[RMDB]
RNA sequence: GGGAACGACUCGAGUAGAGUCGAAAAGAUAUGGACUACUGAUGACCUACGGCGACAACAGCUCGGAAACGAGACAUGUCGAAGUAGCAAGGUAGUCCUAAGUCAAACCUACAGUUCGCUGUAGGAACCUUCGCAUCUAGUUCGCUAGAUGCGAAGGAAAAGAAACAACAACAACAAC
Reactivity to DMS in 0.01 (KOAc 150mM, MgCl2 10mM, bicine 150mM(pH8.5), 24C), signal-to-noise 1, nucleotides 027 to 126: g000a050u010a300u000g010g010a010c010u000a010c010u000g010a010u030g000a070c300c000u000a000c000g000g020c040g000a010c000a020a070c280a260g000c030u010c000g000g010a120a070a220c000g000a000g030a040c110a190u010g020u000c000g000a030a010g000u000a000g000c040a050a020g050g040u000a020g010u000c000c010u000a000a080g000u000c010a050a150a120c000c000u000a000c000a000g010u000u030c260g010c010u010g010u000a010g000g000a000a070
Reactivity to 2A3 in 0.01 (KOAc 150mM, MgCl2 10mM, bicine 150mM(pH8.5), 24C), signal-to-noise 2, nucleotides 027 to 126: g020a000u050a040u160g010g020a000c000u010a000c000u000g100a260u090g000a250c010c010u000a010c000g060g020c000g070a000c010a110a030c030a040g050c010u020c010g000g020a070a070a010c020g010a000g040a030c060a130u110g000u020c020g000a010a010g000u030a000g000c000a150a300g030g020u000a010g000u040c000c000u000a060a020g010u000c000a070a050a140c000c010u000a000c000a010g050u060u130c180g080c180u040g010u000a000g020g000a010a020

Chemical mapping of a 177-nucleotide RNA with DMS and 2A3. The reactions ran in a buffer of 150 mM KOAc, 10 mM MgCl2 and 150 mM bicine (pH 8.5), at 24 C. For DMS, 788 sequencing reads were counted. DMS adducts were read by reverse transcription with MarathonRT. Reactivities are given for positions 27 through 126.